[RMDB]
An RNA of 177 nucleotides, treated with DMS and read out base by base. The RNA was probed in 150 mM KOAc, 10 mM MgCl2 and 150 mM bicine (pH 8.5) at 24 C. The DMS profile rests on 1,347 reads.
RNA sequence: GGGAACGACUCGAGUAGAGUCGAAAAAAAAAGGAAGUAUCGCCUAAUGGUAGGGCAGCAGCUUGGAAAGCUGUGGGCGGCAUCGUCUUGUGGGUUCGAUUCCCUCUACUUCCGCCAAAUAAAAAAAUCCAAAAUACGGAUUCGUCCGUAUUUUGGAAAAAGAAACAACAACAACAAC
Reactivity to DMS in 0.01 (KOAc 150mM, MgCl2 10mM, bicine 150mM(pH8.5), 24C), signal-to-noise 2, nucleotides 027 to 126: a000a050a090a050a050g020g010a030a030g020u000a000u000c020g010c000c010u010a080a090u000g010g010u020a010g000g000g000c020a270g000c000a000g010c010u000u000g010g000a090a070a050g000c000u000g010u010g000g000g020c050g000g000c240a050u010c010g000u000c000u000u000g000u000g000g010g010u000u000c000g010a300u000u000c000c000c010u010c000u000a010c010u000u000c000c000g040c030c070a020a090a090u030a010a000a000a050a060a070a070